Source: RMDB library OK2TRN, as collected in RNAgym. An RNA of 177 nucleotides, treated with DMS and 2A3 and read out base by base. For 2A3, 2,743 sequencing reads were counted.
RNA sequence: GGGAACGACUCGAGUAGAGUCGAAAACGCGCCGAUCUGCUCACGCCAAUAGCGCUUGUCCGCAUCGCUCGCGUGCCGCUGCCGCCACGCGAGCACCGCGUCGAACUGCACGGCGGCCGGCAACGCAUCCCAUCAUGGGAUUCGUCCCAUGAUGGGAAAAAGAAACAACAACAACAAC
Reactivity to DMS in 0.01 (KOAc 150mM, MgCl2 10mM, bicine 150mM(pH8.5), 24C), signal-to-noise 2, nucleotides 027 to 126: c110g010c030g020c150c010g020a040u000c040u010g010c020u000c050a070c170g020c010c110a120a090u020a060g040c020g000c070u020u000g000u000c050c030g000c060a070u000c090g020c050u000c120g030c000g040u000g010c070c040g000c040u000g000c060c000g000c110c000a130c070g030c010g000a060g010c100a020c130c080g000c040g000u000c050g020a090a110c030u000g000c140a090c090g000g000c030g000g000c030c020g010g000c010a030a050c050g010c090a150
Reactivity to 2A3 in 0.01 (KOAc 150mM, MgCl2 10mM, bicine 150mM(pH8.5), 24C), signal-to-noise 2, nucleotides 027 to 126: c030g000c010g040c020c050g070a150u020c030u080g000c010u010c040a050c060g030c010c010a150a190u140a110g040c060g040c100u050u080g080u020c030c020g000c030a060u080c080g010c070u040c040g020c000g000u020g000c020c010g050c170u160g050c020c030g030c030c010a030c010g000c000g010a010g030c010a010c000c020g030c010g070u050c070g010a130a180c070u130g000c070a030c090g050g010c000g010g000c010c000g000g000c010a000a050c010g000c030a040
Reactivities are given for positions 27 through 126. The DMS profile rests on 1,748 reads.